Record summary: The data come from the RNA Mapping Database (RMDB), library OK2TRN. Structure probing data (2A3 and DMS) for a 177-nucleotide construct. DMS adducts were read by reverse transcription with MarathonRT.

RNA sequence: GGGAACGACUCGAGUAGAGUCGAAAAGUGUUUUUAAAGAGGUCAAGGCUGACUAUUAUAAUAGCUGGCAGGCCCUAUUAUAUGAUGUUAAUGGUAACUUAAACGGGUUCCGUGACCUUACCACUAACCGUAUCAUUUAAUUCGUUAAAUGAUACGGAAAAGAAACAACAACAACAAC
Reactivity to 2A3 in 0.01 (KOAc 150mM, MgCl2 10mM, bicine 150mM(pH8.5), 24C), signal-to-noise 2, nucleotides 027 to 126: g030u010g020u020u030u010u060u180a100a150a020g070a030g000g030u030c060a050a060g110g010c030u020g020a040c000u020a010u080u040a040u020a160a030u010a010g000c030u060g070g040c050a050g140g020c010c000c010u020a030u090u060a050u020a020u090g060a020u110g020u040u060a100a030u090g060g040u040a010a020c020u010u090a100a070a060c090g120g000g000u090u070c030c000g010u020g010a020c000c000u000u020a010c000c010a020c030u030a020a020
Reactivity to DMS in 0.01 (KOAc 150mM, MgCl2 10mM, bicine 150mM(pH8.5), 24C), signal-to-noise 8, nucleotides 027 to 126: g010u010g010u000u010u010u010u000a040a100a150g010a070g020g000u000c040a090a080g010g020c130u000g010a030c020u000a120u000u010a060u010a060a030u000a010g010c050u000g010g020c080a150g020g000c070c080c010u000a020u000u000a050u000a040u010g000a110u010g000u000u000a040a070u000g010g010u010a010a020c050u000u010a040a150a110c180g010g010g010u000u010c020c020g010u000g000a060c090c060u000u000a050c060c010a050c120u000a060a120
In probing experiments dimethyl sulfate is read out at A N1 and C N3, which are open when not base-paired.
The RNA was probed in 150 mM KOAc, 10 mM MgCl2 and 150 mM bicine (pH 8.5) at 24 C.
The 2A3 profile rests on 7,722 reads.